[RMDB]
RNA sequence: GGGAACGACUCGAGUAGAGUCGAAAAUGGUGAAGGCCAUGUUACUUAAAAAGGAGCCACUUCUCUAUGUGCCCAUCCGGCUGGCUGGACACACUAGACACCUCCCAGGUCCUCGUGUGUACCUGGUCAUUAUAGCUCUGUUCGCAGAGCUAUAAUGAAAAGAAACAACAACAACAAC
Reactivity to 2A3 in 0.01 (KOAc 150mM, MgCl2 10mM, bicine 150mM(pH8.5), 24C), signal-to-noise 4, nucleotides 027 to 126: u080g010g020u040g020a080a030g100g020c030c030a060u090g060u080u130a150c060u080u130a070a070a060a030a060g060g010a030g010c010c020a050c040u150u030c030u020c010u030a030u050g020u040g010c000c010c010a020u010c010c030g230g010c170u150g020g000c000u000g010g000a010c000a000c000a010c060u020a010g020a020c020a040c020c010u070c000c020c000a010g000g010u010c010c030u070c060g070u100g020u030g010u090a070c000c000u000g020g010u000
Reactivity to DMS in 0.01 (KOAc 150mM, MgCl2 10mM, bicine 150mM(pH8.5), 24C), signal-to-noise 4, nucleotides 027 to 126: u000g000g030u000g000a120a070g010g000c030c030a040u000g010u000u000a090c070u000u010a050a070a060a100a040g000g000a100g010c050c090a070c100u010u000c050u000c030u000a050u000g010u010g010c020c020c010a060u000c040c050g010g000c170u000g000g000c090u000g020g000a030c010a010c000a020c160u000a050g010a040c140a080c060c040u000c050c010c020a080g000g000u000c020c030u000c270g000u000g020u000g020u000a050c020c000u010g010g000u010